[RMDB]
RNA sequence: GGGAACGACUCGAGUAGAGUCGAAAAGUUCAUCCCCUGAUCAAGGAUGCCCGAAACGGUGAGGCGGAAAGCAAAUUAAAUAACGUCAACCCAUCGGGACGGUUGGCCAGUUAAGAAGUGAGGAUUCGCUUUAUUGUUGGUUCGCCAACAAUAAAGCAAAAGAAACAACAACAACAAC
Reactivity to DMS in 0.01 (KOAc 150mM, MgCl2 10mM, bicine 150mM(pH8.5), 24C), signal-to-noise 2, nucleotides 027 to 126: g010u010u000c020a040u000c000c000c000c040u010g000a030u000c110a080a080g030g000a120u000g000c010c000c000g020a020a130a080c240g000g010u000g000a200g030g000c000g010g010a050a100a090g040c130a040a080a140u010u000a020a080a140u010a020a140c030g010u000c000a050a060c040c000c090a110u000c020g000g010g000a040c070g010g000u010u000g000g040c060c050a000g040u000u000a100a120g040a060a020g000u000g030a080g000g000a190u010u000c110
Reactivity to 2A3 in 0.01 (KOAc 150mM, MgCl2 10mM, bicine 150mM(pH8.5), 24C), signal-to-noise 2, nucleotides 027 to 126: g010u050u070c000a030u040c030c010c020c000u010g010a050u030c000a020a020g050g030a080u130g050c020c000c010g030a060a060a030c060g030g010u040g000a140g040g070c000g060g010a150a020a000g070c100a090a000a070u190u260a070a060a070u100a040a010c000g010u000c010a000a010c000c000c000a040u010c020g020g050g000a000c000g040g010u030u030g010g030c040c020a030g020u090u080a120a050g050a050a060g070u110g150a070g090g100a080u070u030c070
Chemical mapping of a 177-nucleotide RNA with DMS and 2A3. It was measured as part of the RMDB library RFMREP. For DMS the reverse transcriptase was MarathonRT. The RNA was probed in 150 mM KOAc, 10 mM MgCl2 and 150 mM bicine (pH 8.5) at 24 C.